Notes:
An RNA of 177 nucleotides, treated with 2A3 and DMS and read out base by base. The RNA was probed in 150 mM KOAc, 10 mM MgCl2 and 150 mM bicine (pH 8.5) at 24 C. Values cover nucleotides 27 to 126.
[RMDB]
RNA sequence: GGGAACGACUCGAGUAGAGUCGAAAAUCCACGUCCUUCGGGACGUGGAAAAUACGGCACGGGAGCCGAAGAAAUCCCGAAGCGCAGUGCAGCGCAGGACAAAAAGGUGAGUCUUCGGACUCACCAAGUGUAGGGUAAUCUUCGGAUUACCCUACACAAAAGAAACAACAACAACAAC
Reactivity to 2A3 in 0.01 (KOAc 150mM, MgCl2 10mM, bicine 150mM(pH8.5), 24C), signal-to-noise 1, nucleotides 027 to 126: u000c000c000a020c010g000u000c000c020u040u080c240g070g010g020a000c010g030u060g000g000a000a000a000a000u070a020c010g030g000c060a000c040g020g000g020a020g020c020c050g020a090a050g090a040a030a000u040c010c030c000g000a180a050g020c010g000c010a060g100u250g180c090a060g000c050g000c040a040g060g110a050c030a040a100a030a030a000g010g010u000g010a000g000u000c000u010u100c190g060g010a000c030u000c000a010c000c000a000a000
Reactivity to DMS in 0.01 (KOAc 150mM, MgCl2 10mM, bicine 150mM(pH8.5), 24C), signal-to-noise 2, nucleotides 027 to 126: u010c000c010a000c000g000u010c010c000u000u020c190g010g000g010a010c000g060u000g010g000a010a010a030a100u000a180c000g010g000c010a110c010g010g030g000a050g030c000c000g020a080a090g010a070a080a110u020c000c000c020g000a140a130g000c000g050c020a110g000u000g010c260a090g000c000g030c000a110g000g010a060c120a090a070a020a040a060g010g020u010g000a000g000u000c010u000u030c240g030g000a020c020u000c010a000c000c000a010a020